[RMDB]
RNA sequence: GGGAACGACUCGAGUAGAGUCGAAAAGUCCUAGCGAAAAGCUAGGACAAGUGCAUCGCUAGACACAUCGUCGAAAAGACGAUCGGAUGCACAUGUCUAGUAAAAAGUCGAGGAGAACUCGACAAAACACGAGUAUAGUAUUCGUACUAUACUCGUGAAAAGAAACAACAACAACAAC
Reactivity to 2A3 in 0.01 (KOAc 150mM, MgCl2 10mM, bicine 150mM(pH8.5), 24C), signal-to-noise 9, nucleotides 027 to 126: g000u010c000c000u000a000g000c020g080a190a130a120a010g000c000u000a000g000g000a000c000a010a010g000u000g010c010a020u010c040g070c210u130a060g050a070c070a020c010a130u000c000g030u000c000g050a140a150a050a090g010a010c010g010a010u010c010g070g000a010u030g020c000a000c000a020u050g040u000c030u040a090g130u300a090a020a030a050a020g010u000c000g000a000g020g030a160g040a240a150c000u000c000g000a000c000a010a010a000a010
Reactivity to DMS in 0.01 (KOAc 150mM, MgCl2 10mM, bicine 150mM(pH8.5), 24C), signal-to-noise 6, nucleotides 027 to 126: g020u000c000c000u000a000g000c010g000a100a090a080a140g020c010u000a010g000g000a000c010a030a030g020u000g000c020a010u010c000g010c110u000a110g020a090c180a180c170a030u000c000g010u000c000g000a100a090a080a110g000a010c010g000a010u000c060g020g000a020u010g000c000a010c020a080u010g010u000c040u030a120g020u040a050a060a060a090a080g000u000c000g000a020g000g000a200g010a130a170c000u000c000g000a010c000a020a020a090a130
Conditions: 150 mM KOAc, 10 mM MgCl2 and 150 mM bicine (pH 8.5), 24 C.
An RNA of 177 nucleotides, treated with 2A3 and DMS and read out base by base.
The 2A3 profile rests on 18,187 reads.
For DMS, 17,879 sequencing reads were counted.
The data come from the RNA Mapping Database (RMDB), library OK1LIB.
For DMS the reverse transcriptase was MarathonRT.
Reactivities are rounded to 0.1 and cut off at 0 and 3.